[RMDB]
RNA sequence: GGGAACGACUCGAGUAGAGUCGAAAAGAUAUGGAACCUCAUGGUUCUUGGACCAAUAUUCGGAAACGAAUAUUGCUAGAAUGACCAUGAGGGUUCCUAAGUCAAAAGAGCUACUUCGGUAGCUCAACAUGUUUCCAUAGUUCGCUAUGGAAACAUGAAAAGAAACAACAACAACAAC
Reactivity to DMS in 0.01 (KOAc 150mM, MgCl2 10mM, bicine 150mM(pH8.5), 24C), signal-to-noise 7, nucleotides 027 to 126: g000a030u000a220u010g000g000a010a050c000c000u010c000a010u000g000g010u010u000c220u000u000g000g000a230c300c000a010a010u000a010u000u000c000g000g000a060a050a070c010g010a010a010u000a000u000u000g000c020u000a090g000a060a030u000g010a020c000c000a020u000g010a020g010g010g000u000u000c000c000u010a030a120g010u010c020a050a070a140a100g000a020g010c000u000a000c000u000u020c220g030g020u000a010g010c000u000c010a040a140
Reactivity to 2A3 in 0.01 (KOAc 150mM, MgCl2 10mM, bicine 150mM(pH8.5), 24C), signal-to-noise 5, nucleotides 027 to 126: g000a000u060a010u080g010g000a010a020c000c010u000c010a010u010g010g040u160u080c070u190u240g040g020a000c010c000a020a000u010a010u010u010c020g000g000a020a030a020c010g000a000a000u010a000u010u000g000c000u030a090g150a300a300u300g070a060c010c000a000u000g020a050g020g000g010u000u000c000c000u010a010a000g020u010c010a000a050a060a240g010a000g010c010u010a000c000u050u080c280g150g000u000a000g000c000u000c000a000a010